[RMDB]
RNA sequence: GGGAACGACUCGAGUAGAGUCGAAAAGCAGUUCUGAACCAUGCUGCCUUCCACUGGUUAAGACCUCCGAGAGCGAAGGCCUGCAGAGGCAGAGGAAGUCCCUCUGCCGCCCCCAGAGGGGCAGCACCAGAUUAAAUCAAUUCGUUGAUUUAAUCUGAAAAGAAACAACAACAACAAC
Reactivity to 2A3 in 0.01 (KOAc 150mM, MgCl2 10mM, bicine 150mM(pH8.5), 24C), signal-to-noise 9, nucleotides 027 to 126: g030c030a030g020u110u070c060u160g070a070a050c050c010a050u090g000c000u000g000c000c000u170u200c040c030a100c040u020g000g040u120u110a070a020g060a060c010c010u040c020c050g150a150g020a030g240c080g050a090a020g010g010c010c010u030g000c010a030g030a090g130g000c000a000g000a000g010g020a070a040g150u120c020c000c000u000c000u000g000c000c000g010c000c000c000c000c000a010g020a020g010g010g000g000c000a000g000c010a010c020
Reactivity to DMS in 0.01 (KOAc 150mM, MgCl2 10mM, bicine 150mM(pH8.5), 24C), signal-to-noise 9, nucleotides 027 to 126: g020c080a070g010u010u010c070u020g000a110a120c120c110a170u020g000c000u000g000c010c000u000u020c050c070a120c030u000g000g010u020u010a090a040g010a070c030c010u000c030c020g010a240g010a160g010c060g010a050a030g010g010c030c020u000g010c130a080g010a150g000g010c000a010g000a020g000g010a150a230g010u040c140c000c000u000c000u000g000c010c010g010c040c060c100c020c040a050g000a130g010g000g000g000c000a010g010c020a070c270
About this RNA:
Source: RMDB libraries RFM100 and RFMREP, as collected in RNAgym. An RNA of 177 nucleotides, treated with 2A3 and DMS and read out base by base. Reactivities are given for positions 27 through 126. The reactions ran in a buffer of 150 mM KOAc, 10 mM MgCl2 and 150 mM bicine (pH 8.5), at 24 C.